[RMDB]
RNA sequence: GGGAACGACUCGAGUAGAGUCGAAAACAGUGCCGCGAAUGAUCGAAUGAAUUUUGUCACCAUCGCGACGAGCAUCUUUAAGACGCUUCAGGAUCACAACCGCGACCCCUUCGCCGGGUACAAUCCCGAUAGUUAGUCCUUUCGAGGACUAACUAUCAAAAGAAACAACAACAACAAC
Reactivity to DMS in 0.01 (KOAc 150mM, MgCl2 10mM, bicine 150mM(pH8.5), 24C), signal-to-noise 5, nucleotides 027 to 126: c140a100g020u010g020c090c000g000c020g020a030a110u000g010a050u010c090g000a040a060u010g020a110a130u000u000u000u000g010u000c030a050c080c070a070u000c040g010c030g010a090c070g010a060g000c030a040u000c040u000u000u010a110a110g010a040c060g020c020u000u010c100a090g000g010a060u000c050a060c100a080a080c080c040g000c050g010a100c050c020c040c060u000u000c080g010c110c090g000g000g000u010a050c110a060a200u000c000c000c000
Reactivity to 2A3 in 0.01 (KOAc 150mM, MgCl2 10mM, bicine 150mM(pH8.5), 24C), signal-to-noise 4, nucleotides 027 to 126: c030a030g030u030g080c030c010g000c010g050a040a090u070g020a050u140c060g060a030a080u150g090a210a120u150u090u100u200g070u040c020a030c070c030a070u030c010g000c010g040a030c030g020a020g010c010a020u020c020u030u210u120a140a050g040a050c030g030c030u040u040c080a040g030g040a050u050c020a020c020a100a060c030c020g010c010g030a040c020c010c000c000u010u020c040g050c090c010g070g000g000u040a080c020a010a050u030c010c000c000